An RNA of 207 nucleotides, treated with DMS and 2A3 and read out base by base.
Values cover nucleotides 27 to 156.
RNA sequence: GGGAACGACUCGAGUAGAGUCGAAAACAAGUUAGUUGCUUGCGCUUUUAGCAAGGCUUGCUUUUUUGCGCCAGCCAUUGCGCUUUUUUAGUUUUUUCAGCCACAGCUUGCCAGCGCAGUUAGGCAGUUUUGCCAAGCAUUCACAAGGCAGCACAAGCACUAUUGAGUGAUUCGUCACUCAAUAGUGAAAAGAAACAACAACAACAAC
Reactivity to DMS in 0.01 (KOAc 150mM, MgCl2 10mM, bicine 150mM(pH8.5), 24C), signal-to-noise 3, nucleotides 027 to 156: c040a070a240g010u000u000a080g010u000u010g010c000u000u000g030c060g000c050u000u000u000u010a080g000c000a030a050g000g040c030u010u000g030c010u010u000u010u000u000u010g020c010g040c010c030a110g020c070c150a120u000u000g010c030g000c040u000u000u000u000u000u000a140g030u010u000u000u000u010u000c070a300g030c020c030a070c050a100g020c090u010u000g020c010c040a100g020c030g040c020a050g010u000u010a050g020g010c000a030g020u000u000u000u010g010c030c030a060a130g030c050a110u010u020c060a150c090a110a130g020g020c060a090g030c050a030c060a080a150g010
Reactivity to 2A3 in 0.01 (KOAc 150mM, MgCl2 10mM, bicine 150mM(pH8.5), 24C), signal-to-noise 6, nucleotides 027 to 156: c040a060a040g100u120u100a030g010u050u070g030c020u040u060g010c020g010c050u060u060u070u230a010g000c010a020a020g050g020c040u080u150g000c020u100u100u040u000u150u090g000c010g010c020c030a030g020c040c030a080u040u090g020c090g010c000u060u040u030u000u040u120a120g060u070u080u050u020u080u180c050a010g030c020c020a060c010a060g030c020u060u160g030c060c050a040g000c020g000c030a020g020u020u040a030g010g000c010a010g000u050u060u090u020g000c010c010a010a000g020c010a060u130u200c070a040c030a170a070g080g000c020a010g020c020a030c010a070a020g050
Overview
For DMS the reverse transcriptase was MarathonRT. For 2A3, 5,522 sequencing reads were counted. Reactivities are rounded to 0.1 and cut off at 0 and 3. Conditions: 150 mM KOAc, 10 mM MgCl2 and 150 mM bicine (pH 8.5), 24 C.